[RMDB]
RNA sequence: GGGAACGACUCGAGUAGAGUCGAAAAGAUAUGGACUAAGAGGUACUGGUCGUUGAAAUCGGAAACGAUGGAGACCUGGUACUACCCACCUUAGUCCUAAGUCAAAAUCUCACGUUCGCGUGAGAAAGUAUUCUCUUGGGUUCGCCCAAGAGAAUACAAAAGAAACAACAACAACAAC
Reactivity to 2A3 in 0.01 (KOAc 150mM, MgCl2 10mM, bicine 150mM(pH8.5), 24C), signal-to-noise 1, nucleotides 027 to 126: g060a000u210a060u300g010g000a000c010u010a000a010g000a010g030g000u030a000c010u040g000g080u130c070g040u210u000g020a040a010a000u010c000g020g000a140a050a070c010g030a010u010g060g040a040g000a010c000c020u020g000g000u010a010c000u010a010c020c000c010a070c010c000u010u000a000g020u000c000c020u020a140a030g100u060c090a050a000a050a280u010c010u000c020a010c010g070u100u090c300g000c010g110u020g040a000g040a020a020a020
Reactivity to DMS in 0.01 (KOAc 150mM, MgCl2 10mM, bicine 150mM(pH8.5), 24C), signal-to-noise 2, nucleotides 027 to 126: g000a060u020a300u000g020g020a030c000u000a020a000g030a170g000g000u000a000c000u000g000g030u010c040g030u040u000g000a120a140a020u000c000g010g000a170a070a180c010g010a010u010g000g000a290g000a010c010c010u010g000g000u000a010c020u010a070c010c030c150a300c130c000u000u010a000g020u000c010c010u000a000a020g010u000c050a110a040a090a100u000c000u000c000a020c020g010u000u000c240g010c000g010u010g000a020g010a040a040a150